[RMDB]
RNA sequence: GGGAACGACUCGAGUAGAGUCGAAAAAGAAAAUUCAACGAGGUCAGCUACCGCGUGAACAAAAUCGCUCAAGCCAUGCCCGCCAUUGAGAACGAAGAAACCAAACGCUCAAUGGAGCAAGAGGUAAUGGAAACACUCAAAACCUACGCGAAAGCGGCGUGCGAUUAGUAUUCGUACUAAUCGCACGAAAAGAAACAACAACAACAAC
Reactivity to 2A3 in 0.01 (KOAc 150mM, MgCl2 10mM, bicine 150mM(pH8.5), 24C), signal-to-noise 2, nucleotides 027 to 156: a000g110a000a050a000a040u130u030c030a040a000c030g020a040g000g040u040c040a040g030c070u090a070c010c020g000c000g030u050g040a090a040c070a060a120a030a070u020c050g020c030u080c070a070a010g000c010c000a000u010g000c000c020c000g030c010c010a000u000u010g000a000g030a130a050c170g030a150a070g080a040a090a060c100c080a160a070a060c030g000c020u000c010a000a050u000g010g010a000g020c030a030a030g040a100g010g040u070a160a040u020g000g000a080a050a000c070a030c070u080c040a060a060a030a060c010c030u070a030c030g000c000g000a020a050a000g010c010g030g010
Reactivity to DMS in 0.01 (KOAc 150mM, MgCl2 10mM, bicine 150mM(pH8.5), 24C), signal-to-noise 1, nucleotides 027 to 156: a100g000a000a030a150a100u000u000c000a180a020c120g000a060g020g000u000c030a220g020c180u000a100c020c000g030c030g030u040g030a080a140c060a010a200a030a160u000c060g000c060u010c060a070a180g000c000c060a070u010g100c000c020c050g010c000c000a110u000u000g000a040g000a020a150c000g000a190a090g040a110a260a180c120c070a020a110a150c080g000c020u000c010a040a000u000g000g000a100g070c040a030a180g000a060g040g020u000a040a060u000g000g000a110a120a150c030a150c100u000c040a040a000a140a120c070c010u010a080c020g020c000g000a080a080a100g030c020g000g030